[RMDB]
This 177-nucleotide RNA was probed chemically with DMS.

RNA sequence: GGGAACGACUCGAGUAGAGUCGAAAAUUUGAUCUGGUAUCCCCAUUGCUCCACGAGGUGACACUUCAAGCAAUGGUCGUUGAUGUCACAGCUUUUAAAGACGGAGUUUAUAGAUACACGGAAGCCAACCAGUAUCGGCUUUCGAGCCGAUACUGGUAAAAGAAACAACAACAACAAC
Reactivity to DMS in 0.01 (KOAc 150mM, MgCl2 10mM, bicine 150mM(pH8.5), 24C), signal-to-noise 1, nucleotides 027 to 126: u000u040u000g000a160u010c030u040g010g030u000a040u000c000c040c060c170a090u020u000g010c010u000c010c050a190c190g020a170g000g020u020g020a040c040a060c120u000u010c050a060a130g020c100a140a150u000g040g020u040c110g000u000u000g000a120u000g010u000c000a040c010a080g010c150u000u000u000u000a040a110a100g000a150c130g000g000a080g010u000u000u040a040u000a090g000a050u000a020c020a070c010g000g000a050a260g010c050c070a080

Notes: The reactions ran in a buffer of 150 mM KOAc, 10 mM MgCl2 and 150 mM bicine (pH 8.5), at 24 C.